[RMDB]
RNA sequence: GGGAACGACUCGAGUAGAGUCGAAAAUAGCAUUCGUGCUACGAUCGGCGUACUACUUACGACAUGCUCGAUCACGGGAGGAGCUCCCAAAUAGGAGCUCCGAAGAACGUGUAGAGAGCAACAGCGUAAGUAUCGCACUAACCUAUUUCGAUAGGAAUCGUUAGUACCGAUUCGUCGGUACUAACGAAAAAGAAACAACAACAACAAC
Reactivity to DMS in 0.01 (KOAc 150mM, MgCl2 10mM, bicine 150mM(pH8.5), 24C), signal-to-noise 2, nucleotides 027 to 156: u010a030g000c000a070u000u000c180g040u000g040c000u000a010c010g030a240u010c020g010g020c020g050u000a100c080u000a000c000u000u020a010c000g070a080c090a300u000g020c030u000c000g020a300u000c030a030c020g010g000g010a270g010g010a050g020c000u000c020c000c020a050a120a300u030a050g030g030a050g020c000u000c000c010g000a080a080g020a120a150c010g010u010g040u020a000g000a300g000a020g020c000a020a070c080a190g040c000g020u000a050a120g000u000a050u010c030g040c030a080c080u000a060a070c010c000u010a130u010u010u000c090g020a140u000a060g020g010a180a220
Reactivity to 2A3 in 0.01 (KOAc 150mM, MgCl2 10mM, bicine 150mM(pH8.5), 24C), signal-to-noise 4, nucleotides 027 to 156: u060a020g000c010a010u100u050c240g100u080g030c010u020a040c030g180a170u220c100g050g000c020g090u090a120c020u000a010c000u030u020a020c020g150a100c060a100u040g000c000u000c000g030a090u080c010a010c000g030g000g000a040g000g030a000g000c000u010c030c050c020a170a190a020u300a050g000g000a000g000c000u000c000c000g010a010a000g000a010a010c000g010u000g050u140a070g020a000g000a010g050c010a000a050c020a020g030c010g000u000a000a000g000u010a000u220c010g010c020a030c060u050a020a040c000c000u010a020u030u130u100c180g080a020u050a020g060g000a060a110
Structure probing data (DMS and 2A3) for a 207-nucleotide construct. DMS adducts were read by reverse transcription with MarathonRT. Conditions: 150 mM KOAc, 10 mM MgCl2 and 150 mM bicine (pH 8.5), 24 C.